RNA sequence: GGGAACGACUCGAGUAGAGUCGAAAAACGGGUAGCGGGUGUGAGAGCACGACCCGCGACAUCGGGACUGAGACACUGCCCGGACUCCUACGGGAGGCUGCAGCAACGAAUCUUCCGCAAUGGGCGCGACGUCUAUAAAGUUCGCUUUAUAGACGUCAAAAGAAACAACAACAACAAC
Reactivity to DMS in 0.01 (KOAc 150mM, MgCl2 10mM, bicine 150mM(pH8.5), 24C), signal-to-noise 4, nucleotides 027 to 126: a150c050g000g000g010u000a060g020c000g020g010g010u000g010u010g010a230g020a160g020c030a060c050g010a060c000c010c000g020c020g010a030c120a040u010c020g000g010g000a130c120u000g000a090g010a160c090a090c060u000g000c010c120c020g000g000a070c030u000c020c010u010a110c160g010g010g000a020g010g010c030u000g020c130a050g010c060a040a090c120g000a070a100u000c050u000u000c010c030g010c120a070a070u010g000g010g000c110g030c160
Reactivity to 2A3 in 0.01 (KOAc 150mM, MgCl2 10mM, bicine 150mM(pH8.5), 24C), signal-to-noise 3, nucleotides 027 to 126: a010c030g000g000g050u010a010g010c000g010g020g000u020g010u030g040a300g010a040g240c040a010c050g120a050c000c010c000g020c020g000a000c000a060u090c020g010g030g030a030c050u080g070a010g000a040c030a000c060u030g030c000c010c000g000g050a040c000u010c010c020u030a050c100g060g000g000a010g000g000c010u050g000c030a000g000c020a030a040c030g030a070a050u030c020u080u010c020c000g040c050a080a090u130g050g020g000c060g000c050

Chemical mapping of a 177-nucleotide RNA with DMS and 2A3. For 2A3, 6,004 sequencing reads were counted. Conditions: 150 mM KOAc, 10 mM MgCl2 and 150 mM bicine (pH 8.5), 24 C. 2A3 adducts were read by reverse transcription with SuperScript II with manganese.